Structure probing data (2A3) for a 177-nucleotide construct. The 2A3 profile rests on 506 reads. 2A3 adducts were read by reverse transcription with SuperScript II with manganese. Source: RMDB library OK1LIB, as collected in RNAgym. Conditions: 150 mM KOAc, 10 mM MgCl2 and 150 mM bicine (pH 8.5), 24 C.
[RMDB]
RNA sequence: GGGAACGACUCGAGUAGAGUCGAAAAGGAGAUCGAAGAAGACCGACGUCAGCACGGUCGGGAUGUAGGUCCGCAUGCAUCCCAGUUGACGAAACUUUACGAUUUCCAAAGCGGACAAGAAGUCAAAACCGUCAUACCGGUUCGCCGGUAUGACGGUAAAAGAAACAACAACAACAAC
Reactivity to 2A3 in 0.01 (KOAc 150mM, MgCl2 10mM, bicine 150mM(pH8.5), 24C), signal-to-noise 1, nucleotides 027 to 126: g000g000a070g000a000u000c000g010a030a070g300a000a000g000a160c000c140g000a040c140g100u050c070a060g050c260a020c060g100g100u170c080g010g000g000a000u000g000u000a000g000g000u000c000c000g000c000a000u000g000c000a000u000c000c000c000a000g030u010u010g030a060c120g080a000a000a000c000u010u150u250a050c020g000a000u010u000u000c000c030a010a050a000g000c010g060g000a000c000a020a130g090a100a000g050u020c110a050a030a050